The record gives the reactivity of an RNA of 207 nucleotides to 2A3 and DMS. It was measured as part of the RMDB library RNAMAK. 2A3 is a SHAPE reagent: it acylates the 2'-hydroxyl of flexible nucleotides of all four kinds. DMS adducts were read by reverse transcription with MarathonRT. The reactions ran in a buffer of 150 mM KOAc, 10 mM MgCl2 and 150 mM bicine (pH 8.5), at 24 C. Values cover nucleotides 27 to 156. DMS (dimethyl sulfate) methylates the pairing face of unpaired adenines and cytosines.

RNA sequence: GGGAACGACUCGAGUAGAGUCGAAAAGGUUGUGCUCUUCGGAGCACAACCAAAAACCGUAGGAGCCUCACAGCAAUAAUUCAUACAUUCGAAAGAGUGUGAUGAUAGCUGUAGGGCUCCUAAACGGAAAAAAGUAUAGGAGUUCGCUCCUAUACAACUGUAACAUAUUGUUCGCAAUAUGUUACAGAAAAGAAACAACAACAACAAC
Reactivity to 2A3 in 0.01 (KOAc 150mM, MgCl2 10mM, bicine 150mM(pH8.5), 24C), signal-to-noise 1, nucleotides 027 to 156: g010g000u010u010g000u000g020c000u030c020u070u200c300g010g000a000g010c000a020c000a010a020c020c000a000a000a000a000a000c000c000g000u000a000g000g000a000g010c000c000u020c020a000c000a000g000c020a120a260u090a150a060u130u000c000a000u000a040c000a010u000u000c000g070a100a040a070g000a020g010u020g000u090g130a010u000g000a000u010a010g000c000u000g020u000a000g010g000g010c000u000c000c000u000a000a000a000c020g000g010a130a010a000a000a050a240g000u010a000u020a000g000g020a010g020u080u170c260g180c100u030c000c000u000a000u000a000c000a020a000
Reactivity to DMS in 0.01 (KOAc 150mM, MgCl2 10mM, bicine 150mM(pH8.5), 24C), signal-to-noise 1, nucleotides 027 to 156: g020g020u000u010g030u010g020c030u010c000u000u000c300g060g000a040g040c000a020c000a010a010c000c010a010a010a090a040a130c010c000g000u010a060g010g010a040g000c010c010u010c010a020c000a020g000c000a230a210u000a060a050u010u000c000a000u000a060c010a020u020u000c000g010a180a140a240g000a020g030u000g000u000g000a020u010g010a090u000a070g000c000u000g050u000a050g000g020g020c000u000c010c010u000a010a010a060c010g010g010a010a080a070a120a100a170g000u000a020u000a010g010g010a030g010u000u000c300g020c010u040c000c000u000a000u000a030c000a030a080